Structure probing data (DMS) for a 177-nucleotide construct.
RNA sequence: GGGAACGACUCGAGUAGAGUCGAAAAAGGGUGUGCUCAGAGCAGGGGGCCUGAGGAAUGGCUCCUCUGUUUAUAACACACCCAAUACGAACCUGGUCAUGAUGUGAGGAGGGCUACAAAGUAUGUUUUCCUACCAUAUGUUCGCAUAUGGUAGGAAAAAAGAAACAACAACAACAAC
Reactivity to DMS in 0.01 (KOAc 150mM, MgCl2 10mM, bicine 150mM(pH8.5), 24C), signal-to-noise 1, nucleotides 027 to 126: a110g010g000g000u000g050u000g030c020u000c280a260g000a020g020c000a010g000g010g010g000g020c010c010u000g000a190g030g010a170a210u010g010g010c000u030c000c000u000c000u000g010u000u000u000a090u000a050a030c000a010c030a000c010c000c000a000a120u010a090c160g000a040a120c020c020u000g020g000u000c050a060u010g000a080u010g020u040g000a100g020g000a090g000g000g020c030u000a050c060a170a120a100g030u000a110u010g010u000u000
DMS adducts were read by reverse transcription with MarathonRT.